[RMDB]
RNA sequence: GGGAACGACUCGAGUAGAGUCGAAAACGAAUGUUAAUGCCAGUGGGGCAGGUUGAUUAUUUCAGUACGACAGGAACGGCUGUUGUUAUGGGGGCAAUUAGUGACGGCAGUACCAAUAUGGUCGCUAUUGUACCCACAACCACAGGAUUAAUGGACACAUAUUGUAGCCGUUCGCGGCUACAAUAUGAAAAGAAACAACAACAACAAC
Reactivity to 2A3 in 0.01 (KOAc 150mM, MgCl2 10mM, bicine 150mM(pH8.5), 24C), signal-to-noise 3, nucleotides 027 to 156: c020g030a060a070u090g020u160u120a100a030u100g060c030c010a040g080u130g030g030g020g000c020a030g020g020u010u030g070a120u010u170a090u080u050u060c010a020g030u050a020c030g020a000c030a030g100g010a120a020c040g100g040c040u030g000u030u010g040u000u000a040u130g020g010g000g010g000c000a000a010u090u030a100g010u000g000a020c030g040g090c040a020g070u160a130c070c000a100a110u160a090u260g100g000u000c000g000c010u000a010u010u000g010u060a090c000c000c000a020c000a010a000c000c050a000c000a010g000g050a060u070u110a080a050u070g070g000a000c010a010
Reactivity to DMS in 0.01 (KOAc 150mM, MgCl2 10mM, bicine 150mM(pH8.5), 24C), signal-to-noise 2, nucleotides 027 to 156: c080g020a060a080u010g010u000u010a090a110u010g000c020c060a170g030u020g020g010g040g020c030a050g000g000u000u020g000a150u000u010a080u000u010u010c030a110g020u000a060c020g000a140c020a040g010g000a060a060c110g020g050c000u000g020u010u010g040u000u000a050u000g020g020g040g000g020c000a010a010u000u000a070g020u000g000a050c010g070g050c020a110g000u010a300c080c050a070a080u000a090u000g050g030u010c020g030c040u000a050u000u020g010u000a080c030c020c010a030c030a020a080c020c050a040c040a050g000g020a100u000u000a050a110u000g000g000a110c040a160
Overview: Structure probing data (2A3 and DMS) for a 207-nucleotide construct. For DMS the reverse transcriptase was MarathonRT. For 2A3 the reverse transcriptase was SuperScript II with manganese.